[RMDB]
RNA sequence: GGGAACGACUCGAGUAGAGUCGAAAAGUACGUAAAUCAAUCGCUUUCUCUUUAAGCUUCAAACCAAUAUGUUCAGGCAAAUAAGUCAACUCAUACGACACUGGCUGACGGUUGAGUAAACGGACAAUGCUCAUAGGCUAUUCGUAGCCUAUGAGCAAAAAGAAACAACAACAACAAC
Reactivity to DMS in 0.01 (KOAc 150mM, MgCl2 10mM, bicine 150mM(pH8.5), 24C), signal-to-noise 2, nucleotides 027 to 126: g010u000a010c080g000u010a110a110a140u010c080a060a040u010c080g020c040u010u000u000c040u000c060u000u000u000a090a120g020c100u000u000c100a080a030a080c090c100a090a100u010a060u000g000u000u010c060a060g010g000c040a060a090a100u000a070a080g040u020c090a040a070c100u000c090a060u020a100c120g000a070c090a050c050u010g010g000c050u000g000a010c040g000g000u020u000g000a040g000u010a000a060a020c050g010g010a140c150a040a050
Reactivity to 2A3 in 0.01 (KOAc 150mM, MgCl2 10mM, bicine 150mM(pH8.5), 24C), signal-to-noise 1, nucleotides 027 to 126: g030u070a010c060g010u050a000a080a170u100c040a010a030u040c080g020c080u040u030u050c070u060c000u010u090u050a010a000g020c000u060u060c080a110a000a080c040c000a050a020u080a100u190g040u070u060c020a010g020g080c010a060a110a110u080a190a060g060u010c010a000a040c040u050c170a040u120a080c100g010a010c050a040c050u000g070g030c010u000g030a060c090g030g000u000u030g050a050g020u040a160a060a010c040g000g030a000c040a070a000